[RMDB]
RNA sequence: GGGAACGACUCGAGUAGAGUCGAAAAGUUGAUGGUGGGAAGUGGUACAAGUCUGCUUUUAAAUCCCUUGGACUGGAUUUUGUUCACGUAACCUUCGGGCCGAGGAACUGUAUUGAACGCUGGUUUAAUACAUUAGGCUCUUCGGAGCCUAAUGUAUAAAAGAAACAACAACAACAAC
Reactivity to DMS in 0.01 (KOAc 150mM, MgCl2 10mM, bicine 150mM(pH8.5), 24C), signal-to-noise 2, nucleotides 027 to 126: g030u000u000g010a070u010g010g010u010g010g000g010a090a080g010u010g000g020u000a050c120a060a090g020u010c030u000g020c070u030u000u010u010a030a120a140u000c020c010c030u010u000g040g000a030c050u010g000g000a120u010u020u000u010g000u000u010c050a050c120g010u010a110a080c010c080u000u010c060g030g000g020c060c030g020a060g000g010a060a040c110u000g010u000a050u010u000g000a030a050c080g020c120u000g000g000u000u000u000a060

Chemical mapping of a 177-nucleotide RNA with DMS.
Conditions: 150 mM KOAc, 10 mM MgCl2 and 150 mM bicine (pH 8.5), 24 C.
The data come from the RNA Mapping Database (RMDB), library OK2TRN.
The DMS profile rests on 2,267 reads.